An RNA of 177 nucleotides, treated with DMS and 2A3 and read out base by base.
[RMDB]
RNA sequence: GGGAACGACUCGAGUAGAGUCGAAAAUAUACAUCAGAAGUCGGCACAACUCCCGACUCGCGGUGAGCGAUGCAGCGUAGCUCCGGCUACGCAGCUGCUGUGCGGAUGGCUAGCAAAAGCUAGCCUAGAGGACCAGUAUCUUCGGAUACUGGUCCUCAAAAGAAACAACAACAACAAC
Reactivity to DMS in 0.01 (KOAc 150mM, MgCl2 10mM, bicine 150mM(pH8.5), 24C), signal-to-noise 1, nucleotides 027 to 126: u020a090u010a250c000a080u010c080a030g010a070a130g000u000c000g000g000c150a030c070a020a130c260u020c030c000c000g000a140c060u000c140g010c300g030g030u050g000a030g010c030g000a080u040g040c000a010g030c000g000u000a000g010c060u000c160c210g000g000c000u000a000c030g010c000a010g100c000u030g000c050u000g010u050g000c110g000g000a080u030g000g000c000u000a000g010c000a290a200a180a060g000c000u000a000g000c000c000u000a010
Reactivity to 2A3 in 0.01 (KOAc 150mM, MgCl2 10mM, bicine 150mM(pH8.5), 24C), signal-to-noise 2, nucleotides 027 to 126: u070a010u120a040c030a040u150c100a020g020a030a000g100u010c000g000g220c040a010c040a290a300c210u170c000c030c000g050a030c070u000c000g000c060g000g000u170g050a000g030c030g140a160u200g010c000a010g000c000g000u000a000g000c010u000c100c300g110g000c000u000a000c000g000c000a000g000c000u010g080c010u010g020u180g040c040g190g020a150u060g000g020c000u000a000g000c010a030a080a000a300g000c000u000a000g000c000c000u000a060

For 2A3, 581 sequencing reads were counted.
The reactions ran in a buffer of 150 mM KOAc, 10 mM MgCl2 and 150 mM bicine (pH 8.5), at 24 C.
2A3 adducts were read by reverse transcription with SuperScript II with manganese.